[RMDB]
RNA sequence: GGGAACGACUCGAGUAGAGUCGAAAAGGGAAGCACUAAGGAUCAGGUUGGGGGCACAGUGUGUCCGAGGAGGAAUCCUCCUGAUAGGAACUGGAAUGUGCCUUGAAGGGGACACCAUGUGUAUAAGCUUGGUGUCGCUAUUCGUAGCGACACCAAGAAAAGAAACAACAACAACAAC
Reactivity to 2A3 in 0.01 (KOAc 150mM, MgCl2 10mM, bicine 150mM(pH8.5), 24C), signal-to-noise 1, nucleotides 027 to 126: g030g000g000a010a040g000c040a000c100u060a070a070g080g000a090u050c030a010g060g020u060u030g090g030g000g030g000c030a000c050a070g120u080g000u030g020u110c030c040g020a030g010g000a000g040g000a080a120u100c000c000u020c000c010u020g010a020u050a040g010g030a020a010c030u020g080g010a210a110u080g000u050g020c000c000u000u020g040a020a040g060g000g010g000a000c020a000c020c020a050u140g020u000g000u020a040u060a240a010g060
Reactivity to DMS in 0.01 (KOAc 150mM, MgCl2 10mM, bicine 150mM(pH8.5), 24C), signal-to-noise 2, nucleotides 027 to 126: g010g000g000a080a080g010c020a040c090u010a080a100g020g000a090u010c120a050g010g010u010u010g000g000g000g010g030c010a030c020a040g020u020g040u010g030u000c000c030g000a030g000g010a040g000g030a190a170u010c030c010u020c000c020u000g000a120u020a090g020g010a130a030c020u000g010g010a080a150u010g020u000g000c000c020u000u000g000a200a040g000g010g000g000a050c100a040c050c050a030u020g000u000g030u000a130u010a100a130g010